[RMDB]
RNA sequence: GGGAACGACUCGAGUAGAGUCGAAAAGGGUGAGACCUAGGAACCGUAGGGGUAUUCUCAAAGGAAGCUUUUGCAGUGACGCCCAUGUAAGUGGGAUAUAACAACAGAACUCGAAUGAGUAGCCUAAUAAAUCGGACCUUCUUCGGAAGGUCCGAAAGACUAUAGAUUUGUUCGCAAAUCUAUAGUCAAAAGAAACAACAACAACAAC
Reactivity to 2A3 in 0.01 (KOAc 150mM, MgCl2 10mM, bicine 150mM(pH8.5), 24C), signal-to-noise 2, nucleotides 027 to 156: g060g010g010u050g010a100g030a080c000c010u030a060g070g070a100a070c080c060g040u090a040g000g080g010g010u030a140u140u020c070u030c020a060a060a010g060g000a030a010g050c050u020u060u060u040g010c050a020g010u020g040a030c040g020c020c040c000a010u030g080u090a050a100g010u030g030g000g000a010u010a000u020a100a020c030a000a010c010a030g060a040a010c010u060c050g080a100a100u180g000a020g020u030a010g020c010c010u030a100a090u030a060a130a040u030c000g000g000a020c000c000u000u020c010u000u020c020g090g000a000a000g000g030u000c000c000g000a000a000a000
Reactivity to DMS in 0.01 (KOAc 150mM, MgCl2 10mM, bicine 150mM(pH8.5), 24C), signal-to-noise 1, nucleotides 027 to 156: g010g000g060u000g030a180g030a100c030c030u000a160g000g010a050a060c040c030g000u000a080g000g010g030g040u010a080u000u000c030u020c030a030a100a190g000g030a060a100g000c040u000u000u000u000g030c010a070g050u000g000a230c190g030c000c000c020a080u020g000u000a090a150g030u010g010g010g000a050u000a080u020a200a090c030a080a050c070a080g010a110a050c040u000c020g000a130a150u010g000a030g010u010a100g020c020c030u000a060a080u000a040a130a070u000c000g010g030a060c010c010u000u000c000u000u000c300g030g010a000a030g040g010u010c000c030g000a000a020a030